This 177-nucleotide RNA was probed chemically with 2A3 and DMS. Source: RMDB library OK1LIB, as collected in RNAgym. 2A3 adducts were read by reverse transcription with SuperScript II with manganese. Conditions: 150 mM KOAc, 10 mM MgCl2 and 150 mM bicine (pH 8.5), 24 C.
[RMDB]
RNA sequence: GGGAACGACUCGAGUAGAGUCGAAAAUAUUGACACAAUCGCCGAUAUCAACGACGACACCAGUAGCAACGUCGUAGGCAUAUAGUACAAGGCUUGGCUGACGUGAUAUCGCUGCACCCUUGAAAAACGAGCGCAGUAAUUUCGAUUACUGCGCUCGAAAAGAAACAACAACAACAAC
Reactivity to 2A3 in 0.01 (KOAc 150mM, MgCl2 10mM, bicine 150mM(pH8.5), 24C), signal-to-noise 2, nucleotides 027 to 126: u180a010u010u160g080a000c000a000c060a150a190u050c060g000c000c000g030a000u000a000u090c080a100a050c000g000a030c010g020a000c020a080c110c040a090g010u110a010g030c080a110a030c070g000u040c000g010u000a010g030g010c090a000u180a020u060a080g110u080a100c040a140a010g060g000c000u060u060g180g000c000u000g020a030c100g030u000g020a000u040a050u040c000g040c010u100g000c010a110c070c010c000u000u070g240a080a070a060a010a000
Reactivity to DMS in 0.01 (KOAc 150mM, MgCl2 10mM, bicine 150mM(pH8.5), 24C), signal-to-noise 1, nucleotides 027 to 126: u040a100u080u000g030a020c110a000c130a050a070u010c080g000c100c010g000a040u000a040u000c090a040a010c120g040a040c000g000a020c060a030c090c010a100g060u050a160g000c130a050a050c010g020u000c000g000u000a090g000g000c080a080u000a000u010a060g000u000a120c300a030a030g030g070c000u000u000g000g030c000u000g020a000c290g030u020g000a030u000a000u000c020g000c050u120g030c020a080c080c000c140u040u010g000a010a010a030a140a180